Overview
This 177-nucleotide RNA was probed chemically with DMS and 2A3. It was measured as part of the RMDB library M2PK50. For 2A3 the reverse transcriptase was SuperScript II with manganese. Reactivities are given for positions 27 through 126.
[RMDB]
RNA sequence: GGGAACGACUCGAGUAGAGUCGAAAACUUAACGCGUUCGCGCGUUAAGAAACAACAAAAACAUCGAGUUGACGAUGACACAAAUACCGUCAGUGUAGACGGAAAGCAUUCGCUUCGGCGAAUGCAAGCAUGAAGCACACUUCGGUGUGCUUCAUGCAAAAGAAACAACAACAACAAC
Reactivity to DMS in 0.01 (KOAc 150mM, MgCl2 10mM, bicine 150mM(pH8.5), 24C), signal-to-noise 1, nucleotides 027 to 126: c020u000u000a000a000c000g010c000g040u000u010c160g040c040g070c000g030u000u000a000a000g010a070a150a070c040a110a030c040a020a050a080a170a180c000a060u010c020g040a100g010u000u000g000a110c020g010a030u000g000a150c270a080c280a150a000a140u000a060c010c010g000u000c030a120g010u000g020u030a130g010a030c010g000g000a030a020a090g000c000a010u000u000c000g000c000u000u000c120g030g050c000g000a000a000u000g000c000a020a000
Reactivity to 2A3 in 0.01 (KOAc 150mM, MgCl2 10mM, bicine 150mM(pH8.5), 24C), signal-to-noise 1, nucleotides 027 to 126: c010u000u000a000a030c000g010c020g000u000u050c210g000c010g000c000g090u000u000a000a000g010a020a060a000c080a030a000c000a000a100a000a000a080c000a010u010c020g010a040g110u070u130g210a180c010g000a030u060g060a010c010a000c020a110a220a000u160a160c010c010g020u000c000a050g090u020g150u300a120g020a000c040g000g000a000a080a000g000c000a020u030u000c000g010c000u080u030c200g130g000c000g000a000a000u000g000c000a010a000